[RMDB]
RNA sequence: GGGAACGACUCGAGUAGAGUCGAAAACCCUUAGCCAUCCGAGUGGACGUCUGUCCUCCUUCGGAUGCCCAGGUCGGACCGCGGGGAGGUGGAGAUGCCAUGCCGACCCGAAGAGGAAAGGAAGGACACACUGCAGCCUUCGGGCUGCAGAAAAGAAACAACAACAACAAC
Reactivity to DMS in 0.01 (KOAc 150mM, MgCl2 10mM, bicine 150mM(pH8.5), 24C), signal-to-noise 3, nucleotides 027 to 129: c040c010c030u000u060a060g050c130c000a000u040c020c000g060a010g040u010g010g010a040c050g010u050c300u000g000u010c060c020u030c020c120u030u020c060g020g010a030u060g020c000c000c000a140g000g000u000c040g040g000a110c010c080g040c090g030g000g020g050a110g010g030u050g050g000a070g010a100u060g010c090c020a090u000g020c090c020g030a070c010c070c020g040a070a040g000a080g040g040a000a000a000g000g000a050a050g050g000a050c180a110c170a120
Reactivity to 2A3 in 0.01 (KOAc 150mM, MgCl2 10mM, bicine 150mM(pH8.5), 24C), signal-to-noise 3, nucleotides 027 to 129: c020c000c010u040u180a000g040c040c020a010u000c010c010g020a020g020u060g000g000a010c060g150u150c150u300g010u000c010c010u060c020c050u050u010c100g000g000a040u000g010c010c020c000a020g040g050u050c020g000g010a000c030c000g020c100g020g010g000g010a020g000g000u040g060g040a120g010a040u050g100c040c000a040u090g030c030c020g020a050c000c000c000g040a050a010g000a000g040g030a020a030a010g010g030a000a000g000g000a020c010a000c000a010